[RMDB]
RNA sequence: GGGAACGACUCGAGUAGAGUCGAAAAGCAAAUAUUGUCUUAAUUACUUAGGCUAAAAGAAAUAAGUAUUAAAGCGGGACAAGGCAUCGACAUUUGAUACAAAUAUAGAUCAAUGGAUGUCUUAUUUAAACCUCAUCCGGCUUCGGCCGGAUGAGAACUUGGUAAUUUUGUUCGCAAAAUUACCAAGAAAAGAAACAACAACAACAAC
Reactivity to 2A3 in 0.01 (KOAc 150mM, MgCl2 10mM, bicine 150mM(pH8.5), 24C), signal-to-noise 1, nucleotides 027 to 156: g060c080a050a130a120u170a060u190u150g060u000c020u030u110a080a070u200u070a070c010u000u010a030g000g000c010u130a220a110a050a080g040a000a140a040u040a040a020g030u020a030u020u130a140a130a050g110c130g000g000g110a030c030a090a020g000g000c000a000u000c020g100a090c020a030u030u020u190g020a010u090a080c020a040a190a020u290a040u090a230g030a000u000c000a000a020u010g030g000a000u020g000u010c000u000u010a030u040u050u040a040a040a000c000c000u000c000a000u000c000c000g090g020c100u030u210c300g030g000c020c010g010g000a000u000g000a000g000a000a000
Background:
This 207-nucleotide RNA was probed chemically with 2A3. The 2A3 profile rests on 672 reads.